[RMDB]
RNA sequence: GGGAACGACUCGAGUAGAGUCGAAAAGACGAUCUGCACGUCCUAUCCUGUGGGUAUAGCCGUUCCUGCAUGGUCUGGCUGCGUGGCGCAAGCGUGAUCGCUGCAAGAUGGUGAUUCCCAUCUCACACGACGAUUCGAAUUUCGAUUCGAAUCGUCGAAAAGAAACAACAACAACAAC
Reactivity to DMS in 0.01 (KOAc 150mM, MgCl2 10mM, bicine 150mM(pH8.5), 24C), signal-to-noise 2, nucleotides 027 to 126: g010a100c020g000a050u010c040u000g010c050a140c000g000u000c010c000u020a100u030c010c000u000g020u010g050g020g030u010a060u050a210g020c010c000g010u000u020c000c000u000g060c040a090u020g000g000u000c020u000g010g000c020u060g000c050g000u020g000g000c040g000c060a080a070g010c000g040u020g000a060u000c000g040c240u000g020c060a040a040g000a010u020g000g000u000g000a290u030u000c030c000c020a070u000c070u000c170a110c180a230
Reactivity to 2A3 in 0.01 (KOAc 150mM, MgCl2 10mM, bicine 150mM(pH8.5), 24C), signal-to-noise 5, nucleotides 027 to 126: g040a010c030g030a100u110c150u290g030c080a050c060g020u020c000c000u040a100u050c000c010u040g000u060g020g030g000u090a070u050a050g020c010c020g050u060u050c020c020u020g010c030a030u080g010g000u020c020u020g240g010c010u010g000c070g090u210g100g120c100g000c080a110a080g010c010g040u090g010a020u040c060g000c100u010g010c020a020a020g010a050u030g000g010u060g030a040u110u100c000c020c000a010u020c070u020c000a070c010a020
An RNA of 177 nucleotides, treated with DMS and 2A3 and read out base by base. The RNA was probed in 150 mM KOAc, 10 mM MgCl2 and 150 mM bicine (pH 8.5) at 24 C. For 2A3 the reverse transcriptase was SuperScript II with manganese. Source: RMDB library OK1LIB, as collected in RNAgym.